Structure probing data (2A3) for a 177-nucleotide construct.
[RMDB]
RNA sequence: GGGAACGACUCGAGUAGAGUCGAAAAGUGGUGUGAUCUCAGCUCACUGCAACCUGUGCCUCCCGGGUUCAAGUGAUUCUCCUACCUUAGCCUCCUGAGUAGCUGGGACUACAGGUGCAUGCCACCAGCGUCCAUGGGGAUUCGUCCCCAUGGACGCAAAAGAAACAACAACAACAAC
Reactivity to 2A3 in 0.01 (KOAc 150mM, MgCl2 10mM, bicine 150mM(pH8.5), 24C), signal-to-noise 1, nucleotides 027 to 126: g040u060g000g000u000g010u010g110a200u050c040u000c020a020g010c020u000c030a030c000u000g000c000a000a000c000c000u060g010u080g020c000c000u070c000c000c030g070g000g000u030u030c130a160a030g010u040g100a060u140u000c040u000c000c010u050a060c000c000u000u060a020g070c000c000u010c030c000u000g000a000g010u060a060g020c010u030g010g010g010a000c020u060a030c060a000g080g080u000g000c010a010u040g020c000c000a000c010c000a080
It was measured as part of the RMDB library OK1LIB. The RNA was probed in 150 mM KOAc, 10 mM MgCl2 and 150 mM bicine (pH 8.5) at 24 C. The 2A3 profile rests on 782 reads.